Structure probing data (DMS and 2A3) for a 177-nucleotide construct. For 2A3 the reverse transcriptase was SuperScript II with manganese. For 2A3, 1,283 sequencing reads were counted. For DMS, 5,182 sequencing reads were counted. The reactions ran in a buffer of 150 mM KOAc, 10 mM MgCl2 and 150 mM bicine (pH 8.5), at 24 C. The data come from the RNA Mapping Database (RMDB), library 15KREP.
RNA sequence: GGGAACGACUCGAGUAGAGUCGAAAAGUAUCAUUAGGGAUGUAAAUCCUGAUGAUAAGUGCUUUGCUAAUAAGCACCGGUCCUUCACACAAUGGUAUCAUGAGCAUGUUGGUGGUGUCUAUGACAAGUGAUAACAUAGGUUCGCCUAUGUUAUCACAAAAGAAACAACAACAACAAC
Reactivity to DMS in 0.01 (KOAc 150mM, MgCl2 10mM, bicine 150mM(pH8.5), 24C), signal-to-noise 4, nucleotides 027 to 126: g020u010a010u000c000a010u000u000a100g030g000g010a050u010g010u010a100a120a040u010c000c000u000g010a020u000g010a010u000a030a110g020u010g000c010u000u000u010g010c160u020a090a060u000a030a020g010c010a010c010c170g010g010u000c030c010u000u000c080a070c120a080c120a050a060u000g010g000u000a070u000c050a070u010g000a090g000c090a070u000g010u000u010g010g020u000g010g010u000g000u000c030u000a120u010g000a070c150a070a130
Reactivity to 2A3 in 0.01 (KOAc 150mM, MgCl2 10mM, bicine 150mM(pH8.5), 24C), signal-to-noise 2, nucleotides 027 to 126: g030u020a000u010c000a010u020u070a120g000g020g050a020u110g060u300a100a100a020u030c000c000u000g000a010u000g010a010u010a030a050g010u000g010c010u050u070u080g010c020u050a110a040u050a140a050g000c000a000c000c020g050g010u040c000c000u100u130c040a040c000a010c030a040a130u070g090g030u050a030u160c060a050u060g050a010g070c030a050u040g000u080u160g080g010u030g000g000u040g020u050c010u080a100u080g030a050c030a110a120